[RMDB]
RNA sequence: GGGAACGACUCGAGUAGAGUCGAAAAUGAGUUCUGUUAGAAAGGACCAAGAAAGAGAGGGCCUAACUGACCUGAUUGAUUACAUUAAUUCACCAAGUGAACUGUUGAAAAAGAAGCCUUAUUUAGGUACAACCUGCAGGUUCCAAUGCUGGGGAGAUCUAACCAAUUCGUUCGCGAAUUGGUUAGAAAAAGAAACAACAACAACAAC
Reactivity to DMS in 0.01 (KOAc 150mM, MgCl2 10mM, bicine 150mM(pH8.5), 24C), signal-to-noise 2, nucleotides 027 to 156: u000g000a040g040u000u000c020u000g000u000u000a120g020a130a110a080g010g000a030c030c010a130a110g030a160a080a140g000a140g010a230g000g070g020c040c020u000a080a170c070u030g010a030c000c010u000g000a130u000u010g020a100u000u000a060c110a190u010u000a060a130u000u010c020a090c030c060a020a170g040u000g010a060a070c060u000g060u010u010g010a090a050a080a190a080g030a170a180g000c010c020u000u020a170u000u000u000a040g000g000u000a050c060a010a100c040c010u020g000c040a110g000g050u010u000c070c030a070a180u000g000c050u000g010g000g030g010a160g030a120
Reactivity to 2A3 in 0.01 (KOAc 150mM, MgCl2 10mM, bicine 150mM(pH8.5), 24C), signal-to-noise 2, nucleotides 027 to 156: u170g010a030g110u080u030c010u010g000u080u120a030g080a050a060a020g000g000a050c010c050a070a030g110a170a110a020g090a010g030a070g050g010g000c030c000u010a020a030c030u020g050a050c000c030u050g060a120u070u140g050a060u030u100a020c040a040u100u090a180a100u090u070c010a060c100c130a160a040g030u010g200a050a070c000u010g050u140u110g080a150a100a060a060a060g120a100a010g000c010c000u130u100a130u040u100u080a020g000g000u070a030c010a030a050c090c000u020g030c030a030g000g110u060u110c070c010a060a000u100g000c020u030g000g000g000g000a080g000a010
The data come from the RNA Mapping Database (RMDB), library OK3TST. This 207-nucleotide RNA was probed chemically with DMS and 2A3. DMS (dimethyl sulfate) methylates the pairing face of unpaired adenines and cytosines. The 2A3 profile rests on 543 reads. 2A3 adducts were read by reverse transcription with SuperScript II with manganese. The DMS profile rests on 2,549 reads.